[RMDB]
RNA sequence: GGGAACGACUCGAGUAGAGUCGAAAAUCUGCAGAGCAUCGUGGUGCAGGAGCGCGGGCUGCCGCUGUCCGAGAAGCUGGCGGCCAUCAACUUCUCGGUGCUGAGUCUGGGCAAGUACUACGCUAGGAAGAUCUACAAGACCCCGUACGUGCCCAUAGGAGGUAAUGAAGUUCGCUUCAUUACCUCCAAAAGAAACAACAACAACAAC
Reactivity to 2A3 in 0.01 (KOAc 150mM, MgCl2 10mM, bicine 150mM(pH8.5), 24C), signal-to-noise 2, nucleotides 027 to 156: u000c040u160g010c020a050g000a020g090c060a040u100c130g140u120g090g060u190g030c040a040g090g000a050g000c120g000c190g010g000g000c010u040g020c010c020g000c070u120g120u130c060c080g150a130g020a100a030g020c180u240g050g030c050g080g000c000c010a080u060c000a020a020c020u090u030c040u010c030g000g020u030g000c000u020g030a000g070u000c020u050g000g030g020c010a000a000g010u000a020c090u020a010c070g050c100u060a010g000g080a020a120g020a140u070c010u070a020c030a080a000g070a130c040c000c000c000g010u000a010c040g010u000g010c000c010c020a030u000a020
Description
Conditions: 150 mM KOAc, 10 mM MgCl2 and 150 mM bicine (pH 8.5), 24 C. Structure probing data (2A3) for a 207-nucleotide construct. Reactivities are rounded to 0.1 and cut off at 0 and 3. For 2A3, 710 sequencing reads were counted.